[RMDB]
RNA sequence: GGGAACGACUCGAGUAGAGUCGAAAACUGGCGGCUCUGUCGAUCCACUUCAACGCGAUCGGGCCGAGGUGGGCGCACAAAGACCUGUUCGGCGAUCCGCGCAUCCACAACGUGACGCCGGAGGUCGUGCCGAUGUGAUAUUCGUAUCACAUCGGCAAAAAGAAACAACAACAACAAC
Reactivity to DMS in 0.01 (KOAc 150mM, MgCl2 10mM, bicine 150mM(pH8.5), 24C), signal-to-noise 2, nucleotides 027 to 126: c100u010g020g040c020g040g000c040u000c030u000g000u000c000g000a100u000c080c030a140c090u000u020c180a070a120c210g030c080g000a020u000c120g000g000g000c030c080g000a110g000g010u000g000g000g010c100g000c080a010c120a040a150a090g000a000c010c000u000g030u030u000c000g000g010c020g020a140u020c060c090g010c070g090c170a050u000c160c100a120c120a030a050c050g000u030g000a130c060g000c000c010g000g000a040g000g000u000c030g000
Reactivity to 2A3 in 0.01 (KOAc 150mM, MgCl2 10mM, bicine 150mM(pH8.5), 24C), signal-to-noise 1, nucleotides 027 to 126: c020u020g200g010c010g000g000c000u000c000u070g160u100c030g020a040u050c100c010a040c050u200u160c120a110a080c100g010c020g150a130u070c040g000g130g000c040c010g010a000g000g060u140g020g140g000c120g020c130a070c060a060a190a020g010a010c010c010u070g130u170u070c000g000g020c000g050a210u020c100c000g010c020g000c050a050u090c050c100a040c070a170a030c010g020u120g020a040c000g010c000c000g000g000a020g000g000u000c010g020

Conditions: 150 mM KOAc, 10 mM MgCl2 and 150 mM bicine (pH 8.5), 24 C. Chemical mapping of a 177-nucleotide RNA with DMS and 2A3. 2A3 adducts were read by reverse transcription with SuperScript II with manganese. The data come from the RNA Mapping Database (RMDB), library OK2TRN. The 2A3 profile rests on 1,004 reads.